[RMDB]
RNA sequence: GGGAACGACUCGAGUAGAGUCGAAAAGAAACUCAAGGAGUGCUAAGAGGGUAAACUAAAUGUUUACUUUAAAGUAAACCUGUAAAUGGAGAAGUUGUCCCAGUCCUUUGCAGGACAUAUAUGUAUAGUGCUAAUAGAUGUUCGCAUCUAUUAGCACAAAAGAAACAACAACAACAAC
Reactivity to DMS in 0.01 (KOAc 150mM, MgCl2 10mM, bicine 150mM(pH8.5), 24C), signal-to-noise 3, nucleotides 027 to 126: g020a180a070a060c010u010c020a130a050g010g000a080g040u000g000c030u000a080a130g030a100g000g000g000u000a000a010a010c010u000a060a100a110u020g000u000u010u000a000c000u000u010u000a060a110a060g010u000a040a050a020c010c010u000g000u010a050a110a130u030g010g010a100g000a070a080g000u000u010g010u010c010c010c000a150g010u000c000c010u010u000u010g020c220a030g010g010a010c020a080u000a030u000a080u010g020u010a080u000a140
Reactivity to 2A3 in 0.01 (KOAc 150mM, MgCl2 10mM, bicine 150mM(pH8.5), 24C), signal-to-noise 2, nucleotides 027 to 126: g000a010a000a010c010u010c020a010a000g040g000a030g030u040g050c030u080a170a030g090a100g110g040g020u010a020a020a000c010u050a120a090a150u250g000u000u000u000a000c000u000u030u010a000a030a040g010u010a010a000a060c000c000u040g080u200a020a120a150u220g060g020a090g030a160a090g010u050u030g030u000c000c010c000a020g000u000c000c020u000u080u200g010c110a020g030g040a010c020a000u250a010u040a020u020g100u020a110u070a170